Annotation:
The record gives the reactivity of an RNA of 207 nucleotides to DMS and 2A3. Values are in units of 0.01, from 0 to 300, in steps of 10.
RNA sequence: GGGAACGACUCGAGUAGAGUCGAAAAUGGCAGACACUGCCUUAACCAGAUGACCAUGGUUAACAUCACCAGAGCUAAGUCAUGGUGGUAUCAUGUACUUCUUUCUCUGAUAGGAUCAGAAGGGCACCUCACUUCUGUUGUAUGCUCCUCCAAAAAAGAUAGUGGAUCAUUUCGAUGAUCCACUAUCAAAAGAAACAACAACAACAAC
Reactivity to DMS in 0.01 (KOAc 150mM, MgCl2 10mM, bicine 150mM(pH8.5), 24C), signal-to-noise 1, nucleotides 027 to 156: u010g030g000c000a060g000a230c120a080c040u000g000c000c010u000u020a040a120c040c000a100g020a150u000g020a080c030c000a150u010g040g020u020u000a050a080c100a100u020c000a080c040c000a060g000a090g020c090u010a080a100g000u000c000a130u010g020g010u010g030g000u000a070u000c040a030u000g010u020a020c020u000u010c030u000u000u000c030u000c020u030g000a060u010a100g000g050a300u000c080a080g020a060a100g020g000g080c050a010c020c050u000c090a050c060u000u000c030u040g030u010u000g060u000a090u010g020c010u000c020c020u040c000c050a010a080a020a150a170a230
Reactivity to 2A3 in 0.01 (KOAc 150mM, MgCl2 10mM, bicine 150mM(pH8.5), 24C), signal-to-noise 4, nucleotides 027 to 156: u020g000g020c000a010g110a280c090a080c200u030g010c000c010u000u010a020a010c020c020a010g040a130u080g060a050c040c030a040u030g050g000u010u090a060a040c020a080u100c020a030c050c010a010g010a010g080c070u180a140a000g090u070c020a080u060g010g020u040g020g050u070a030u120c030a040u040g050u070a060c010u060u060c010u040u080u020c020u000c010u050g070a120u080a180g060g030a100u090c020a020g050a080a040g010g010g010c020a040c020c020u050c010a050c020u070u010c040u090g070u070u060g080u070a080u120g050c000u030c010c000u000c030c040a010a090a030a060a000a000